[RMDB]
RNA sequence: GGGAACGACUCGAGUAGAGUCGAAAAGAAACAGGCCGAAAGAAAUUUGGCGAAACGGCCUGACAAGGCUCGUAAAGAAUCGCCAUCGUAAAGUACAGCAAGGAUGAGCCAAAUGCUUAGAAAGAAAAAUCCUGGUGGGAUUCGUCCCACCAGGAUUAAAAGAAACAACAACAACAAC
Reactivity to DMS in 0.01 (KOAc 150mM, MgCl2 10mM, bicine 150mM(pH8.5), 24C), signal-to-noise 1, nucleotides 027 to 126: g010a130a260a090c010a030g040g000c000c000g000a200a070a070g000a180a080a160u000u000u000g000g000c000g000a010a080a040c010g010g070c010c000u030g000a090c240a130a070g030g050c000u030c000g000u000a110a090a200g000a050a140u000c000g000c000c000a160u050c190g010u030a160a000a110g000u000a010c050a030g030c030a170a000g000g000a000u000g040a030g000c010c000a010a050a200u010g000c000u000u010a140g000a050a200a180g000a000a180a000